[RMDB]
This 177-nucleotide RNA was probed chemically with 2A3 and DMS.
As a SHAPE reagent, 2A3 marks flexible, mostly unpaired nucleotides at the ribose 2'-OH.
For 2A3 the reverse transcriptase was SuperScript II with manganese.

RNA sequence: GGGAACGACUCGAGUAGAGUCGAAAAUAGCCGCGAUAUCGAUGCUAUAUAAUCGCGCGGCAUGCAUCGCGGCGCAUUACGCGGCUAGCUAGCUAUAGCUAGCCGGCAUGCCGAUGCAUUAAUGCGCCACUUUCAGCCAUUUCGAUGGCUGAAAGUGAAAAGAAACAACAACAACAAC
Reactivity to 2A3 in 0.01 (KOAc 150mM, MgCl2 10mM, bicine 150mM(pH8.5), 24C), signal-to-noise 3, nucleotides 027 to 126: u090a000g010c000c010g000c030g080a060u070a070u300c060g040a040u050g020c080u040a020u030a030u080a300a080u100c050g000c000g020c000g000g030c000a000u010g000c000a020u020c050g000c080g090g050c040g030c030a020u060u070a140c190g000c020g090g000c020u010a000g000c000u010a000g000c040u120a080u040a270g000c010u000a010g000c000c000g020g000c000a000u040g060c030c010g040a040u050g010c000a010u010u090a060a060u080g010c030g040c000
Reactivity to DMS in 0.01 (KOAc 150mM, MgCl2 10mM, bicine 150mM(pH8.5), 24C), signal-to-noise 3, nucleotides 027 to 126: u010a110g040c000c000g010c020g010a160u000a100u010c050g020a030u000g010c120u010a140u020a140u010a100a070u000c030g020c040g000c010g000g010c070a010u000g010c030a040u010c020g010c160g000g000c020g030c050a020u000u010a050c260g020c020g000g020c000u000a010g000c000u000a010g000c220u000a120u000a010g010c000u000a000g010c000c000g010g010c070a030u000g020c030c070g000a050u000g010c010a050u000u000a020a080u000g020c040g050c090
Source: RMDB library OK2TRN, as collected in RNAgym.